[RMDB]
RNA sequence: GGGAACGACUCGAGUAGAGUCGAAAACCUGUUAAGUUCGCUUAACAGGAAAUAAACUUGACAAACGCCGGUCAAGAAAAACGCCAUUAUAAGAUAGCUGAAAAAGAAUUCUGUUCGCAGAAUUCAACUACAAUAUGUGGUUCGCCACAUAUUGUAGAAAAGAAACAACAACAACAAC
Reactivity to DMS in 0.01 (KOAc 150mM, MgCl2 10mM, bicine 150mM(pH8.5), 24C), signal-to-noise 1, nucleotides 027 to 126: c000c030u010g000u000u000a010a020g000u000u000c250g020c000u000u000a020a000c000a000g020g000a020a050a020u020a110a050a080c020u000u000g010a030c020a060a140a060c070g040c060c080g060g020u000c000a000a010g000a100a050a020a060a130c060g000c040c030a170u000u000a070u010a190a240g000a060u000a100g000c000u000g010a040a120a090a140a160g000a050a030u000u000c000u000g000u000u010c210g000c000a030g000a010a010u000u000c000a040a090
Reactivity to 2A3 in 0.01 (KOAc 150mM, MgCl2 10mM, bicine 150mM(pH8.5), 24C), signal-to-noise 2, nucleotides 027 to 126: c000c000u000g030u000u000a010a000g010u000u050c140g000c050u000u000a000a000c010a000g000g020a000a030a000u060a020a070a030c010u020u010g010a020c010a040a250a020c090g070c100c000g050g020u030c020a000a000g070a150a050a050a000a010c060g020c040c010a110u110u170a150u150a270a050g060a050u150a080g060c060u140g010a070a070a020a050a120g000a060a000u000u000c000u020g030u050u110c280g030c090a000g000a000a000u000u010c010a000a000
Description: Chemical mapping of a 177-nucleotide RNA with DMS and 2A3. The data come from the RNA Mapping Database (RMDB), library M2PK50. For DMS the reverse transcriptase was MarathonRT. Conditions: 150 mM KOAc, 10 mM MgCl2 and 150 mM bicine (pH 8.5), 24 C.